[RMDB]
RNA sequence: GGGAACGACUCGAGUAGAGUCGAAAAAUAGCGAGCGUACAUCUCUCUCAGACUGUACGACAGUCUCACUCUCUAGUACUACAGGCUCCUGAGAGAGAGAGAGCGUUCACAGGAGCCUGUAAUUUAAUAAUCUUCGAAAAUUCGUUUUCGAAGAUUAAAAAGAAACAACAACAACAAC
Reactivity to DMS in 0.01 (KOAc 150mM, MgCl2 10mM, bicine 150mM(pH8.5), 24C), signal-to-noise 2, nucleotides 027 to 126: a090u000a080g000c090g000a020g020c030g040u010a060c070a120u000c020u000c020u000c010u000c040a110g010a080c030u000g000u000a090c230g010a130c080a040g000u000c010u010c070a080c080u000c040u000c020u010a060g010u010a070c090u000a010c000a000g000g010c010u000c000c000u000g020a030g000a050g020a020g010a020g000a030g000a080g010c040g010u000u000c040a190c000a050g020g000a010g010c010c000u000g000u000a020a010u010u000u000a080a120